[RMDB]
RNA sequence: GGGAACGACUCGAGUAGAGUCGAAAAUGAAGUCUUAUCUCUUCCUCUCUUCCCAUAAGAGACAACACAAGCUGGUGGAAAGAUGGAAAGAAUGUGGACAUCUGAGUCACACCCAGUUAGGUUUGAAGCCGUCAACACAAUUCGUUGUGUUGACGGCAAAAGAAACAACAACAACAAC
Reactivity to DMS in 0.01 (KOAc 150mM, MgCl2 10mM, bicine 150mM(pH8.5), 24C), signal-to-noise 1, nucleotides 027 to 126: u010g000a080a060g020u000c020u020u000a120u000c050u010c020u000u000c080c020u000c170u000c090u000u000c030c000c010a050u000a040a010g000a010g000a130c090a060a080c220a130c140a100a090g020c090u000g020g010u020g000g000a100a050a010g000a000u020g010g010a130a040a050g020a010a040u000g020u050g030g000a130c000a070u000c030u000g020a080g000u000c090a110c290a190c030c020c000a050g000u000u000a090g040g020u000u000u000g010a110a260
Reactivity to 2A3 in 0.01 (KOAc 150mM, MgCl2 10mM, bicine 150mM(pH8.5), 24C), signal-to-noise 1, nucleotides 027 to 126: u110g040a070a030g030u000c060u110u080a220u090c080u030c000u020u040c000c000u050c000u010c000u050u010c050c010c000a010u010a000a000g010a000g050a030c070a080a030c020a030c000a080a000g030c050u040g050g020u070g020g040a000a130a030g030a010u030g020g010a190a150a040g070a150a070u130g030u070g160g070a010c000a030u040c060u050g050a000g080u100c020a000c000a020c080c010c000a000g090u020u050a150g040g030u060u010u100g130a120a020